[RMDB]
RNA sequence: GGGAACGACUCGAGUAGAGUCGAAAAGUAACAAUUUAUGCAUCUGGAGUCAGUCAGAAGAAGACUGCUGGGUACAGCAGGGUAGUCCUGUUUUCUGUCUCUUUGGCAACCACUGGGAACUGGUAGGCUGGUAAUAUUAUUUCGAUAAUAUUACCAGAAAAGAAACAACAACAACAAC
Reactivity to DMS in 0.01 (KOAc 150mM, MgCl2 10mM, bicine 150mM(pH8.5), 24C), signal-to-noise 7, nucleotides 027 to 126: g010u010a090a100c090a090a080u010u000u000a080u010g000c020a070u000c050u000g000g010a100g010u010c040a040g020u000c040a050g010a090a090g000a100a110g000a090c010u000g010c020u000g000g010g020u010a070c050a030g010c020a030g010g000g020u000a080g010u000c040c020u000g000u000u000u000u000c040u000g010u000c010u000c040u000u000u000g010g010c060a060a080c050c040a050c070u000g010g010g010a080a080c100u000g000g010u000a060g000g010
Reactivity to 2A3 in 0.01 (KOAc 150mM, MgCl2 10mM, bicine 150mM(pH8.5), 24C), signal-to-noise 5, nucleotides 027 to 126: g040u040a060a050c040a070a020u070u170u190a120u180g000c010a060u000c050u090g030g030a030g050u050c030a000g020u030c030a000g050a150a030g040a060a010g050a170c000u010g000c010u020g030g040g070u210a180c010a010g010c010a000g030g010g030u080a030g060u040c010c010u040g030u080u060u040u050c020u020g030u000c000u000c000u080u070u070g050g000c030a040a020c010c010a020c030u030g070g020g020a090a040c010u030g070g020u030a040g130g010